[RMDB]
RNA sequence: GGGAACGACUCGAGUAGAGUCGAAAAGAUAUGGAAGCAUCUCAUUUGAGGAGUAUUAUCGGAAACGAUAAUCUCCAAUGAUGAUGAGAGUGCUUCCUAAGUCAAAACCUCCACUUCGGUGGAGGAAGCUAUGGUGUUACUUCGGUAACACCAUAGCAAAAGAAACAACAACAACAAC
Reactivity to 2A3 in 0.01 (KOAc 150mM, MgCl2 10mM, bicine 150mM(pH8.5), 24C), signal-to-noise 1, nucleotides 027 to 126: g000a030u030a000u090g000g000a010a010g010c000a030u010c010u000c000a040u040u040u100g060a050g000g020a020g000u270a040u060u000a000u000c020g000g030a050a010a050c010g020a000u000a000a000u000c000u000c020c040a010a080u070g020a030u040g000a000u010g000a010g000a010g050u080g000c000u000u000c000c000u010a010a000g020u010c010a000a000a080a270c010c010u000c000c000a020c030u000u080c300g160g000u000g000g020a010g000g020a000a010
Reactivity to DMS in 0.01 (KOAc 150mM, MgCl2 10mM, bicine 150mM(pH8.5), 24C), signal-to-noise 2, nucleotides 027 to 126: g010a060u010a300u020g000g000a020a000g030c000a050u000c000u010c000a010u000u000u000g000a300g010g000a010g010u030a000u010u000a010u000c010g000g000a090a060a130c010g000a010u000a020a000u000c030u000c000c000a060a080u000g010a120u000g000a010u000g020a020g000a130g040u010g000c020u040u000c000c000u000a010a090g010u020c020a170a060a100a180c000c000u000c000c000a010c010u000u010c200g000g040u000g000g000a010g010g010a000a020